[RMDB]
RNA sequence: GGGAACGACUCGAGUAGAGUCGAAAAGAGGUUGCCGUCCACGACCCGCUGGACCGUCUCAGGCCACGUCUCACGCGAUCCGUCUGGCUUCGUGCGCGAGUAGGUCCGGUUGUAGACCAGCUCGCCAAGUUAGUCUAGCCUUCGGGCUAGACUAACUAAAAGAAACAACAACAACAAC
Reactivity to DMS in 0.01 (KOAc 150mM, MgCl2 10mM, bicine 150mM(pH8.5), 24C), signal-to-noise 2, nucleotides 027 to 126: g000a120g010g010u010u020g030c090c040g000u000c020c000a120c040g020a180c030c020c030g040c060u000g000g080a090c070c000g020u000c030u010c080a120g010g010c050c050a040c060g020u000c010u000c010a050c040g010c080g010a040u010c060c040g000u010c040u010g000g050c040u010u000c060g030u000g010c120g010c040g010a040g030u000a140g000g010u000c000c020g010g000u010u000g000u010a160g000a050c030c000a300g000c000u000c000g000c000c080a040